[RMDB]
RNA sequence: GGGAACGACUCGAGUAGAGUCGAAAAAGAGUUCGCUUCGGCGAACUCUACAUCGGGAAAACGGCCUCCCGGAAAGAUAAGGCGGAUUCCGUCCAAGCGCCGAGAGUGGUGCGUUCGCGCACCACAACUCUACUCUUCGAUUCGUCGAAGAGUAGAGAAAAGAAACAACAACAACAAC
Reactivity to 2A3 in 0.01 (KOAc 150mM, MgCl2 10mM, bicine 150mM(pH8.5), 24C), signal-to-noise 4, nucleotides 027 to 126: a000g010a000g010u000u010c010g010c010u030u060c160g090g000c000g000a010a000c000u000c000u000a000c010a050u120c010g030g030g000a030a120a010a110c020g010g010c000c000u000c000c000c000g010g070a150a140a000g110a090u190a100a100g010g000c080g110g080a300u300u150c030c000g010u010c060c060a010a010g020c050g000c210c030g010a020g030a010g020u010g020g010u010g030c050g020u020u050c260g000c010g000c080a010c000c000a000c000a000a000
Reactivity to DMS in 0.01 (KOAc 150mM, MgCl2 10mM, bicine 150mM(pH8.5), 24C), signal-to-noise 2, nucleotides 027 to 126: a040g020a010g010u000u000c000g010c010u000u010c180g050g030c000g020a000a010c010u010c000u000a040c150a080u000c030g000g020g000a010a010a070a120c000g000g000c000c010u010c000c000c000g000g000a060a070a130g000a110u000a070a150g000g010c020g010g000a280u010u020c030c000g000u020c010c080a040a040g000c110g010c000c010g010a300g010a060g010u000g010g010u000g000c000g020u000u010c240g000c000g000c000a010c000c010a000c000a010a160